[RMDB]
RNA sequence: GGGAACGACUCGAGUAGAGUCGAAAAAGUUUAGAUUUCGAUCUAAACUAGACCACUAAGAGGAUGACGAGAGACUACGACGCAUCUAGUAGAAUGCGCCCAGCUGUGAGCAGUUCGCUGCUCACAAAUUAAUUAGGGCUUUCGAGCCCUAAUUAAUAAAAGAAACAACAACAACAAC
Reactivity to DMS in 0.01 (KOAc 150mM, MgCl2 10mM, bicine 150mM(pH8.5), 24C), signal-to-noise 4, nucleotides 027 to 126: a030g010u000u000u000a010g000a010u000u000u020c180g010a020u000c000u000a010a010a010c000u000a050g000a200c010c000a140c170u010a070a090g010a060g000g000a040u010g010a070c040g010a080g000a060g000a090c100u000a050c080g000a090c040g020c010a020u000c020u000a120g000u010a090g010a080a040u000g010c060g010c010c010c120a120g010c140u010g010u000g000a000g010c000a000g010u000u000c240g010c010u000g000c000u000c000a000c000a020a050
Reactivity to 2A3 in 0.01 (KOAc 150mM, MgCl2 10mM, bicine 150mM(pH8.5), 24C), signal-to-noise 3, nucleotides 027 to 126: a010g000u020u000u010a020g010a020u070u040u140c230g050a010u000c010u000a000a010a000c000u010a010g040a050c050c000a030c090u090a090a050g020a030g100g020a040u070g020a040c030g010a000g010a000g010a090c050u050a030c130g090a010c030g000c020a010u020c030u030a030g030u040a010g060a230a050u050g010c020g010c040c020c020a050g060c060u060g000u000g000a010g000c000a010g000u030u110c180g030c130u000g010c000u000c010a000c000a000a010
The record gives the reactivity of an RNA of 177 nucleotides to DMS and 2A3. The reactions ran in a buffer of 150 mM KOAc, 10 mM MgCl2 and 150 mM bicine (pH 8.5), at 24 C. For 2A3, 2,866 sequencing reads were counted. Reactivities are given for positions 27 through 126. In probing experiments dimethyl sulfate is read out at A N1 and C N3, which are open when not base-paired.